This 177-nucleotide RNA was probed chemically with 2A3 and DMS. DMS adducts were read by reverse transcription with MarathonRT. For DMS, 3,254 sequencing reads were counted.

[RMDB]
RNA sequence: GGGAACGACUCGAGUAGAGUCGAAAAGAUAUGGACCUCUACGGAUCGAAGAACUACAUCGGAAACGAUGUAGGGAGAUCCAGUAGAGGGUCCUAAGUCAAAGCGAAACGGCUUCGGCCGUUUCGCACAAACCCUUAUCGUUCGCGAUAAGGGUUUGAAAAGAAACAACAACAACAAC
Reactivity to 2A3 in 0.01 (KOAc 150mM, MgCl2 10mM, bicine 150mM(pH8.5), 24C), signal-to-noise 2, nucleotides 027 to 126: g030a000u080a080u170g000g010a010c010c000u030c000u020a000c020g010g000a010u020c050g150a300a070g010a070a040c010u010a010c000a000u000c010g020g000a070a060a040c000g000a000u000g020u010a010g000g020g020a020g000a000u030c010c040a000g000u010a000g010a050g030g000g010u020c000c000u000a130a020g060u050c050a090a120a030g000c020g020a000a010a000c030g060g060c030u210u270c300g150g000c030c000g000u010u000u030c000g010c000a000
Reactivity to DMS in 0.01 (KOAc 150mM, MgCl2 10mM, bicine 150mM(pH8.5), 24C), signal-to-noise 3, nucleotides 027 to 126: g010a050u020a300u010g000g010a300c000c000u000c000u010a010c000g000g010a010u000c000g020a100a200g000a190a220c000u010a000c010a000u010c010g020g000a180a120a140c010g020a000u000g010u000a010g000g000g000a060g010a010u000c010c010a090g040u000a000g000a010g020g000g010u000c000c000u010a060a180g010u000c040a090a120a130g030c000g010a010a020a010c000g000g000c010u000u010c260g020g000c000c000g010u000u000u000c000g030c000a020